[RMDB]
RNA sequence: GGGAACGACUCGAGUAGAGUCGAAAAGAUGCCUCCAUGGCUGCUCCACAGGGAGACCCCGGUCUCCUGGCCGUCGAUCUUGUAGCGCCCAGCGAGAAAGACCGUACCGACGAUCAGAAACGUAACCAGCACACUUAGAUUUCGAUCUAAGUGUGCUAAAAGAAACAACAACAACAAC
Reactivity to 2A3 in 0.01 (KOAc 150mM, MgCl2 10mM, bicine 150mM(pH8.5), 24C), signal-to-noise 5, nucleotides 027 to 126: g070a010u150g040c000c000u050c040c060a100u170g030g000c020u030g020c020u040c040c020a070c070a090g070g030g000a030g030a030c000c020c030c090g050g010u000c010u000c010c000u030g000g020c010c010g030u060c030g020a090u020c030u020u100g050u090a020g010c000g010c010c010c010a010g010c010g040a020g060a040a090a000g040a010c030c000g050u050a070c000c040g020a040c030g010a070u060c030a050g110a060a090a030c050g020u040a050a040c040c010
Reactivity to DMS in 0.01 (KOAc 150mM, MgCl2 10mM, bicine 150mM(pH8.5), 24C), signal-to-noise 5, nucleotides 027 to 126: g000a080u010g000c000c020u010c070c060a080u020g000g010c020u000g010c060u000c070c030a130c160a140g000g000g000a040g010a040c010c030c140c190g020g010u000c000u000c020c010u000g020g020c040c070g030u010c060g030a120u010c020u020u020g000u020a060g010c060g020c000c010c020a110g010c040g010a050g020a050a080a140g010a050c080c040g010u010a070c040c020g010a070c050g000a070u000c060a100g010a050a090a100c080g000u010a080a160c110c080